[RMDB]
RNA sequence: GGGAACGACUCGAGUAGAGUCGAAAAGAAAAAUACACGUAGGAAAGAAAGUACGAAAGUACGGUGGACUGAAGAAUUCAGCGCUGAGAGGCGCGAAUAAACUACGUGUGAAUAGUCCACAAUAAAAGGGAAACAUUAAGUUCGCUUAAUGUUUCCCAAAAGAAACAACAACAACAAC
Reactivity to DMS in 0.01 (KOAc 150mM, MgCl2 10mM, bicine 150mM(pH8.5), 24C), signal-to-noise 4, nucleotides 027 to 126: g000a020a100a050a080a170u010a060c030a010c020g010u000a010g000g010a100a120a070g000a060a050a070g010u000a010c000g000a140a090a130g010u000a000c000g030g010u010g000g010a020c030u000g000a060a090g020a060a050u020u000c010a130g060c010g020c000u000g000a260g010a190g000g010c000g010c020g010a040a030u000a050a030a100c000u000a000c020g010u000g000u010g000a100a030u010a050g000u000c000c010a030c010a090a130u060a040a020a180a080
Reactivity to 2A3 in 0.01 (KOAc 150mM, MgCl2 10mM, bicine 150mM(pH8.5), 24C), signal-to-noise 3, nucleotides 027 to 126: g010a000a020a010a010a000u130a010c020a000c010g010u010a000g100g150a090a090a080g020a070a280a010g020u010a010c020g050a120a010a000g000u000a000c040g010g030u000g010g000a000c010u020g050a080a000g100a070a050u010u030c030a040g000c000g000c000u000g030a010g000a010g100g000c000g000c040g000a000a010u030a030a020a000c000u020a010c000g000u000g000u020g010a010a000u030a030g000u000c000c040a000c050a010a110u260a070a070a000a050